[RMDB]
Source: RMDB library 15KLIB, as collected in RNAgym. Chemical mapping of a 170-nucleotide RNA with 2A3. The 2A3 profile rests on 3,253 reads. Reactivities are given for positions 27 through 129. Values are in units of 0.01, from 0 to 300, in steps of 10. The reactions ran in a buffer of 150 mM KOAc, 10 mM MgCl2 and 150 mM bicine (pH 8.5), at 24 C.
RNA sequence: GGGAACGACUCGAGUAGAGUCGAAAACCACUUUGCGCUAAUGGUCUUGUAUUCGGCUUAUACAAGAAUAUGUGCACAGGUAGUCCUUCUAUAGUUGAAUUUAAUAGGUUGGCUACCUGUGACUGGAAUAGCCCUGGCUUCGGCCAGGGCAAAAGAAACAACAACAACAAC
Reactivity to 2A3 in 0.01 (KOAc 150mM, MgCl2 10mM, bicine 150mM(pH8.5), 24C), signal-to-noise 3, nucleotides 027 to 129: c000c000a000c010u000u020u100g030c000g000c000u020a040a000u070g040g040u050c000u000u050g000u020a050u000u070c090g060g000c050u070u060a040u030a040c030a010a000g050a030a020u180a040u140g120u070g070c000a000c020a000g010g050u010a020g010u090c000c000u060u090c000u030a100u000a010g110u070u240g110a240a130u190u290u230a140a010u030a010g070g060u010u030g000g000c000u000a000c070c010u000g000u010g000a000c000u000g000g050a010a110u000a020